[RMDB]
RNA sequence: GGGAACGACUCGAGUAGAGUCGAAAAGCUACGGAAUGGAUCCUCGCCGUGAUCUCUACGUACCGCCAUCGGACAUGGAACUACUACAGCGCUCGGAAGAGUACCUGGAUUCCUUCGGACUGUCGACGGAGACCUGGUGCCGGCUCAUCUGUACGCAAUCCCCGGUAUCUUUCGAGAUACCGGGGAUAAAAGAAACAACAACAACAAC
Reactivity to 2A3 in 0.01 (KOAc 150mM, MgCl2 10mM, bicine 150mM(pH8.5), 24C), signal-to-noise 2, nucleotides 027 to 156: g030c010u000a020c020g030g090a110a100u090g190g030a030u050c000c010u010c010g040c020c010g120u090g050a200u040c070u000c010u040a020c040g050u090a160c000c070g040c040c010a050u090c040g070g010a050c040a140u100g050g000a050a030c010u060a030c010u110a100c090a040g010c000g040c080u000c000g010g150a100a000g010a060g040u030a090c000c000u070g010g000a060u000u010c020c000u050u030c030g070g050a150c060u080g060u190c010g020a060c000g020g000a000g020a010c000c040u020g030g000u010g010c040c040g000g000c000u010c030a040u020c010u010g020u030a020c080g020c050a020
Chemical mapping of a 207-nucleotide RNA with 2A3. For 2A3, 971 sequencing reads were counted. Reactivities are given for positions 27 through 156. For 2A3 the reverse transcriptase was SuperScript II with manganese. The reactions ran in a buffer of 150 mM KOAc, 10 mM MgCl2 and 150 mM bicine (pH 8.5), at 24 C. It was measured as part of the RMDB library OK3TST.